The record gives the reactivity of an RNA of 177 nucleotides to DMS and 2A3. DMS adducts were read by reverse transcription with MarathonRT. The data come from the RNA Mapping Database (RMDB), library OK2TRN. 2A3 adducts were read by reverse transcription with SuperScript II with manganese. The RNA was probed in 150 mM KOAc, 10 mM MgCl2 and 150 mM bicine (pH 8.5) at 24 C.

[RMDB]
RNA sequence: GGGAACGACUCGAGUAGAGUCGAAAAACCGGCCGAGCGGUACGUGCGUACGUAUCGUACAUGACUGCGCAGUACGAUCCGGCCGGCGCUCAUGAUCGGCCGUACAUAGGUACAUGCGCGCUAUGCGCCCAGAGCGCAGCUUCGGCUGCGCUCUGGGAAAAGAAACAACAACAACAAC
Reactivity to DMS in 0.01 (KOAc 150mM, MgCl2 10mM, bicine 150mM(pH8.5), 24C), signal-to-noise 1, nucleotides 027 to 126: a120c060c020g030g040c050c030g010a120g030c070g000g010u000a000c000g030u000g000c250g050u000a070c020g030u000a000u030c030g030u020a180c110a100u000g000a040c030u030g040c000g000c010a120g020u000a010c000g000a040u010c100c030g000g010c030c000g030g000c070g000c240u000c190a110u010g000a150u000c020g000g000c000c020g020u000a050c230a140u000a090g040g000u000a000c020a070u000g000c050g000c010g000c040u000a030u000g000c110g000
Reactivity to 2A3 in 0.01 (KOAc 150mM, MgCl2 10mM, bicine 150mM(pH8.5), 24C), signal-to-noise 2, nucleotides 027 to 126: a020c010c000g000g020c030c010g070a060g010c000g000g000u000a000c010g020u010g220c110g110u080a020c040g030u000a050u030c010g010u040a050c050a170u160g070a060c050u140g000c020g000c050a000g010u000a000c000g020a080u010c010c020g000g000c010c000g000g000c010g000c000u210c060a160u170g060a300u060c010g050g000c000c000g040u110a050c010a160u160a070g220g000u000a010c030a070u060g010c010g010c000g030c070u110a050u150g150c060g040